[RMDB]
The record gives the reactivity of an RNA of 177 nucleotides to 2A3 and DMS. For 2A3, 3,996 sequencing reads were counted. Values cover nucleotides 27 to 126. DMS adducts were read by reverse transcription with MarathonRT. The RNA was probed in 150 mM KOAc, 10 mM MgCl2 and 150 mM bicine (pH 8.5) at 24 C. 2A3 is a SHAPE reagent: it acylates the 2'-hydroxyl of flexible nucleotides of all four kinds.
RNA sequence: GGGAACGACUCGAGUAGAGUCGAAAAGGUGAGAGAGGGCAUCUCUGUCAUGUGCCAGUUUUCAAAGGGAAUGCUUCCAGUUUUUGCCCAUUCAGUAUGAUAUUGGCUGCGGGUUUGUCAUAAAUAGCGUUUAGGAACAAUUCGUUGUUCCUAAACGAAAAGAAACAACAACAACAAC
Reactivity to 2A3 in 0.01 (KOAc 150mM, MgCl2 10mM, bicine 150mM(pH8.5), 24C), signal-to-noise 4, nucleotides 027 to 126: g050g000u060g040a090g000a000g020a040g050g040g060c060a060u020c020u000c020u070g090u060c020a030u070g020u030g060c010c020a040g000u040u010u030u130c060a070a040a030g050g020g030a070a060u060g030c020u110u040c050c030a090g010u010u050u060u150u130g080c020c010c020a010u050u040c000a020g090u040a070u140g100a040u040a060u140u100g040g000c010u010g000c050g030g020g000u030u120u090g020u030c020a020u060a200a130a060u130a120g040
Reactivity to DMS in 0.01 (KOAc 150mM, MgCl2 10mM, bicine 150mM(pH8.5), 24C), signal-to-noise 7, nucleotides 027 to 126: g010g020u000g010a050g000a080g010a080g010g020g020c090a060u010c030u000c030u000g010u000c050a060u000g010u010g010c020c020a070g010u000u000u000u000c070a050a070a120g000g000g010a070a060u000g000c060u000u010c040c030a070g000u000u000u000u000u000g010c050c070c020a080u010u000c070a080g010u000a090u000g000a070u000a070u000u010g010g010c030u000g010c100g000g000g010u000u000u000g010u000c040a070u000a040a070a120u010a120g000